Source: RMDB library OK3TST, as collected in RNAgym. This 207-nucleotide RNA was probed chemically with 2A3. 2A3 adducts were read by reverse transcription with SuperScript II with manganese. The 2A3 profile rests on 985 reads. Values cover nucleotides 27 to 156. The RNA was probed in 150 mM KOAc, 10 mM MgCl2 and 150 mM bicine (pH 8.5) at 24 C.
RNA sequence: GGGAACGACUCGAGUAGAGUCGAAAACUGCAGGUCAACGGACUUUCUUCAGAUCAGCUAUUGCAGAAGAAAGGUCAGCCAAGCGCUCUGGGCCAGGUCGACUGUAUAUAGGAGCUUCUGAUUUCAACCAGAAGCUAACUCUCUCCGAAACAAUGAGCAUACCGUCGAUCUUCGGAUCGACGGUAUGAAAAGAAACAACAACAACAAC
Reactivity to 2A3 in 0.01 (KOAc 150mM, MgCl2 10mM, bicine 150mM(pH8.5), 24C), signal-to-noise 2, nucleotides 027 to 156: c030u020g040c050a030g000g100u070c040a090a020c060g120g020a020c010u010u010u020c000u060u000c040a080g030a300u070c070a030g060c050u150a170u300u300g020c030a020g000a030a000g000a010a030a000g040g020u020c010a000g000c030c010a060a070g040c080g000c070u000c010u090g000g070g000c020c020a020g000g070u010c020g020a030c020u040g060u040a060u020a020u100a180g090g020a010g060c060u020u000c000u000g080a160u060u260u300c070a060a020c050c010a000g000a000a000g000c000u000a020a040c000u020c000u020c000u030c010c060g040a040a080a030c060a090a100u160g010a010g040